[RMDB]
RNA sequence: GGGAACGACUCGAGUAGAGUCGAAAAGGGGUCCCAUUGAUGGUCCCAUCGAUCGCUUUGUCAGUGCUGAAGCCUCCACGGCACUUGGAUUUAAGCGGGAGGGACUAAGAUGGGACGGAGGCACCCAAAGCGCUUCAAAGUUCGCUUUGAAGCGCAACGUACGCUAACGGUUCGCCGUUAGCGUACGAAAAGAAACAACAACAACAAC
Reactivity to 2A3 in 0.01 (KOAc 150mM, MgCl2 10mM, bicine 150mM(pH8.5), 24C), signal-to-noise 1, nucleotides 027 to 156: g030g000g000g000u000c010c000c010a020u020u020g160a150u190g050g000u000c010c010c020a080u300c020g030a050u060c010g010c030u000u070u110g130u300c160a060g000u010g000c000u010g050a110a030g010c000c000u060c020c010a010c030g040g050c000a010c000u010u080g110g020a100u170u210u060a010a000g000c000g000g000g010a060g010g000g000a010c000u010a020a040g000a010u000g000g000g000a000c050g000g000a000g000g020c010a030c030c000c000a000a080a050g000c000g000c000u020u000c000a050a000a000g020u060u150c230g070c150u030u000u020g020a000a020g000c000g030c000a000a000